[RMDB]
RNA sequence: GGGAACGACUCGAGUAGAGUCGAAAACUACAAGUCUUCAUCCCGGCACUGCUCCAGCAGGUGGGGUUUGAGUGGCCCUGGUCAGAGUCACUCCGGCAUGCCAAGAUGCUUGAUCGGGCACGAACGCCAGUAAAUGGUGAUUCGUCACCAUUUACUGAAAAGAAACAACAACAACAAC
Reactivity to 2A3 in 0.01 (KOAc 150mM, MgCl2 10mM, bicine 150mM(pH8.5), 24C), signal-to-noise 8, nucleotides 027 to 126: c040u140a070c030a130a030g030u020c030u060u050c050a070u040c020c000c000g040g020c110a130c130u040g010c010u040c070c040a030g000c010a030g020g060u040g020g040g010g020u020u060u090g040a020g000u050g020g020c010c000c010u050g030g110u110c070a010g010a010g120u050c010a010c020u010c020c020g010g000c030a040u110g040c020c010a050a030g100a090u080g020c020u040u040g010a060u100c030g020g000g000c040a010c050g060a140a020c060g050c050
Reactivity to DMS in 0.01 (KOAc 150mM, MgCl2 10mM, bicine 150mM(pH8.5), 24C), signal-to-noise 9, nucleotides 027 to 126: c040u000a090c150a080a110g010u000c030u000u000c080a110u000c010c020c030g010g010c070a110c050u000g000c030u000c090c140a110g010c060a040g010g020u010g010g000g010g000u000u000u000g010a040g020u000g010g000c010c010c010u010g020g010u000c100a070g010a060g010u000c030a040c040u000c030c100g000g000c040a070u000g000c030c050a080a100g010a100u000g000c040u000u000g000a060u000c070g000g000g000c060a060c080g000a050a090c150g010c100